[RMDB]
RNA sequence: GGGAACGACUCGAGUAGAGUCGAAAAGCCAUCAUGGACCAGUUAACAAAUUGAGAACCCGGGCUGACAAACUCGUGGUACUUCAGACGGCUGUAGGCCCGCUGGUCAAAAAUGUAGUCGUUGCACACGCGCAAGACAUAUUGAUAGCCGAUGAGAACAAAGGUACCCUAUUCGUAGGGUACCUUUGAAAAGAAACAACAACAACAAC
Reactivity to 2A3 in 0.01 (KOAc 150mM, MgCl2 10mM, bicine 150mM(pH8.5), 24C), signal-to-noise 1, nucleotides 027 to 156: g140c060c020a020u040c010a000u100g000g050a000c010c010a000g010u040u080a030a100c070a100a150a180u290u210g060a100g050a140a020c020c090c130g130g000g040c010u020g060a020c020a140a300a100c020u060c060g100u060g000g070u030a170c000u080u100c040a020g020a020c000g000g010c010u030g040u110a000g010g000c000c000c000g000c040u040g040g000u020c000a000a210a000a000a000u030g030u030a040g000u000c040g160u030u040g040c000a080c010a010c080g150c010g000c030a000a040g000a060c000a030u150a040u000u180g110a130u090a050g090c030c010g030a010u300g020a040g030a090a010